[RMDB]
RNA sequence: GGGAACGACUCGAGUAGAGUCGAAAAGAUAUGAUCCUCGAAGGGGUCCGACGAUCGGAAGAAAAGGCGGACGUCAGCCGCGCGUCAAUGCAUCGUCGCAUGGACGAAAUCGUUGACCGGGUGAGCAAGGUCGAGACUGCGACGGCAACCGUGAAGGCGUACAGGACUAUUUCGAUAGUCCUGUACGAAAAGAAACAACAACAACAAC
Reactivity to DMS in 0.01 (KOAc 150mM, MgCl2 10mM, bicine 150mM(pH8.5), 24C), signal-to-noise 2, nucleotides 027 to 156: g010a210u000a070u000g000a100u000c010c010u000c060g000a160a140g010g020g010g030u000c000c000g000a090c070g000a170u000c040g000g040a140a150g000a070a070a090a100g000g010c030g010g000a070c020g010u000c020a190g030c000c000g000c070g020c040g000u000c000a010a020u000g020c110a240u000c080g000u000c070g000c120a080u000g010g000a040c000g000a050a050a090u000c030g010u000u020g010a030c000c010g000g010g020u000g000a120g010c050a060a140g010g010u000c020g000a140g010a070c040u000g020c010g070a070c040g020g020c010a050a030c040c020g010u000g000a100a100g000g000
Reactivity to 2A3 in 0.01 (KOAc 150mM, MgCl2 10mM, bicine 150mM(pH8.5), 24C), signal-to-noise 5, nucleotides 027 to 156: g060a000u110a080u210g040a040u030c010c020u030c060g040a130a050g010g040g000g000u000c010c050g020a040c020g010a050u090c060g000g070a070a030g000a020a100a000a040g080g000c030g010g020a070c040g080u040c030a010g020c010c020g080c010g000c030g040u010c000a000a020u050g040c050a080u180c040g060u020c040g020c090a050u170g130g000a010c010g050a060a050a070u120c070g020u010u050g010a010c000c000g020g020g040u090g020a040g030c060a090a030g030g000u030c000g000a000g010a030c060u080g020c020g010a040c000g030g010c040a050a060c010c000g010u030g070a050a040g080g000